[RMDB]
RNA sequence: GGGAACGACUCGAGUAGAGUCGAAAAGCUAUCCGUCCACGUUCACUAAGAAAUCAGCUACGUCACGAAGGGAAAGUACCUGCCAUUGUUUACGGUUACCAAAUUGAAAGUACACCAAUCUAUUUUGUACCUAUUUAACUUUCGAGUUAAAUAGGUAAAAAGAAACAACAACAACAAC
Reactivity to 2A3 in 0.01 (KOAc 150mM, MgCl2 10mM, bicine 150mM(pH8.5), 24C), signal-to-noise 9, nucleotides 027 to 126: g020c030u040a060u080c010c010g030u030c030c010a030c030g040u070u060c050a030c080u110a080a050g060a080a130a030u100c030a010g020c020u080a020c040g060u030c050a010c080g050a080a040g030g000g010a040a120a030g040u030a060c010c010u020g040c030c010a060u050u100g080u090u120u090a040c050g010g020u020u040a030c020c020a030a110a110u090u150g040a140a110a020g040u040a020c030a020c050c010a030a040u050c040u140a160u060u080u030u090g110
Reactivity to DMS in 0.01 (KOAc 150mM, MgCl2 10mM, bicine 150mM(pH8.5), 24C), signal-to-noise 9, nucleotides 027 to 126: g010c060u010a070u010c030c030g010u010c020c030a060c060g000u000u000c040a080c080u010a100a090g010a080a090a080u010c070a060g010c040u000a060c080g010u000c060a050c080g010a090a070g000g000g010a060a040a070g010u000a060c050c020u000g010c040c030a090u010u010g010u010u000u010a080c110g010g000u000u000a090c040c050a040a070a120u010u020g000a070a060a090g010u010a040c100a080c060c050a050a070u010c090u010a100u000u000u000u010g010